[RMDB]
RNA sequence: GGGAACGACUCGAGUAGAGUCGAAAAAAAAAAAAGAUAUGGAACACUAUAAUCGUCCUUGAGAUGAUGGUCGGAAACGACCAGAACAUCAAUGAUGGGACGGUAGUGUUCCUAAGUCAAAAAAAAACUAAACAUGUAUGUUCGCAUACAUGUUUAGAAAAGAAACAACAACAACAAC
Reactivity to DMS in 0.01 (KOAc 150mM, MgCl2 10mM, bicine 150mM(pH8.5), 24C), signal-to-noise 2, nucleotides 027 to 126: a010a000a000a100a050a040a200a070g020a040u000a300u000g000g010a000a000c010a000c000u010a050u000a300a020u000c020g010u000c000c010u000u000g030a140g010a010u000g010a070u000g010g000u010c010g000g000a060a060a210c020g000a010c000c000a020g010a060a110c030a020u000c010a180a200u010g010a150u010g000g000g020a010c000g000g000u000a010g000u000g020u010u000c000c000u000a010a050g010u000c010a000a000a000a000a030a060a110a130a160
Reactivity to 2A3 in 0.01 (KOAc 150mM, MgCl2 10mM, bicine 150mM(pH8.5), 24C), signal-to-noise 2, nucleotides 027 to 126: a030a010a000a060a000a030a040a120g070a060u160a050u150g000g010a000a010c000a000c010u060a150u190a300a210u300c030g000u010c000c000u040u020g050a010g010a040u010g000a000u050g000g000u000c000g000g080a070a070a060c000g000a000c000c000a000g020a090a020c000a010u000c030a040a300u160g070a050u040g060g010g000a000c000g000g030u000a000g000u000g000u010u020c000c000u000a010a010g000u050c040a040a000a000a000a000a040a000a040a190
An RNA of 177 nucleotides, treated with DMS and 2A3 and read out base by base. The reactions ran in a buffer of 150 mM KOAc, 10 mM MgCl2 and 150 mM bicine (pH 8.5), at 24 C. High 2A3 reactivity points to a flexible backbone, as in loops and unpaired stretches. For 2A3 the reverse transcriptase was SuperScript II with manganese. The 2A3 profile rests on 2,881 reads. For DMS the reverse transcriptase was MarathonRT. The data come from the RNA Mapping Database (RMDB), library TTRDES.